[RMDB]
RNA sequence: GGGAACGACUCGAGUAGAGUCGAAAAUGAUUAUGCGGAAAUGUGGAGCUGGAAUUCAUGUGUGUUCCAGUUGCUACUAUAACCAAGCUGACGGCUGGGUUAAUCAUGCACAUGACCUCUCCGCACAACCCGGGACGCAUUUCGAUGCGUCCCGGGUAAAAGAAACAACAACAACAAC
Reactivity to 2A3 in 0.01 (KOAc 150mM, MgCl2 10mM, bicine 150mM(pH8.5), 24C), signal-to-noise 1, nucleotides 027 to 126: u210g190a140u100u170a090u270g200c070g000g000a210a210a050u030g000u000g010g000a000g040c120u000g140g000a120a120u070u080c150a100u100g090u050g060u000g000u040u000c000c020a000g000u050u000g020c000u000a000c020u060a020u000a000a080c030c030a050a000g050c060u070g030a110c000g070g000c000u080g000g110g000u030u160a000a030u090c180a000u080g080c040a020c090a070u120g020a090c000c000u000c000u000c000c000g000c000a000c000a050